[RMDB]
RNA sequence: GGGAACGACUCGAGUAGAGUCGAAAAGAUAUGGAUCCUAUGAGGGAGCUGAUUCGGAAACGAACAGCGUUGAUCUCACGGAUCCUAAGUCAAAAUCUAACGCCUUCCUUCGGGAAGGCGUUAGAAAGAGUAACAAUUUCUUCGGAAAUUGUUACUCAAAAGAAACAACAACAACAAC
Reactivity to DMS in 0.01 (KOAc 150mM, MgCl2 10mM, bicine 150mM(pH8.5), 24C), signal-to-noise 3, nucleotides 027 to 126: g010a030u000a300u030g000g010a010u010c010c000u000a150u000g020a020g030g010g000a040g020c000u000g010a190u000u000c000g020g000a120a070a150c000g000a020a020c000a010g020c010g040u020u000g010a020u000c010u000c000a060c300g000g000a000u000c000c000u000a020a100g000u000c080a080a070a120a150u000c010u000a010a000c000g000c000c000u010u000c010c000u000u010c200g020g020g000a010a000g000g000c010g000u000u000a010g000a020a050a090
Reactivity to 2A3 in 0.01 (KOAc 150mM, MgCl2 10mM, bicine 150mM(pH8.5), 24C), signal-to-noise 2, nucleotides 027 to 126: g010a020u050a020u190g000g010a010u000c010c020u130a180u300g000a010g000g050g010a000g000c010u030g020a300u030u020c010g000g000a110a070a070c010g020a000a020c000a000g000c000g020u190u020g010a030u000c000u010c010a000c010g000g020a000u000c000c000u010a100a000g050u000c030a030a000a030a300u000c010u010a000a000c020g000c030c000u010u000c000c010u030u070c290g040g000g030a000a000g010g000c010g000u000u000a000g000a000a000a000